[RMDB]
RNA sequence: GGGAACGACUCGAGUAGAGUCGAAAAGUUUAUGCAAAGGCACUUCGCAAUGUGUGCUCAAACAUUGCUUAUUCAAACACGCUUCACAAUGUGCGACAAAGAAACAUUGUUAUAAGAGCUAAUGUUUGCAAAUUCCUAUUUUCGAAUAGGAAUUUGCAAAAGAAACAACAACAACAAC
Reactivity to 2A3 in 0.01 (KOAc 150mM, MgCl2 10mM, bicine 150mM(pH8.5), 24C), signal-to-noise 2, nucleotides 027 to 126: g060u100u080u060a080u140g020c060a120a140a090g180g040c070a000c060u070u070c060g000c030a050a030u070g010u020g000u030g040c020u060c070a020a030a020c000a000u000u000g000c000u050u030a230u140u100c090a040a050a050c110a000c070g000c020u030u040c030a000c000a000a000u000g020u020g000c010g070a070c120a130a170a060g220a000a090a000c000a050u000u000g000u000u010a100u010a130a090g020a000g020c070u060a030a130u040g020u030u010u000
This 177-nucleotide RNA was probed chemically with 2A3. For 2A3, 956 sequencing reads were counted. The RNA was probed in 150 mM KOAc, 10 mM MgCl2 and 150 mM bicine (pH 8.5) at 24 C. 2A3 adducts were read by reverse transcription with SuperScript II with manganese.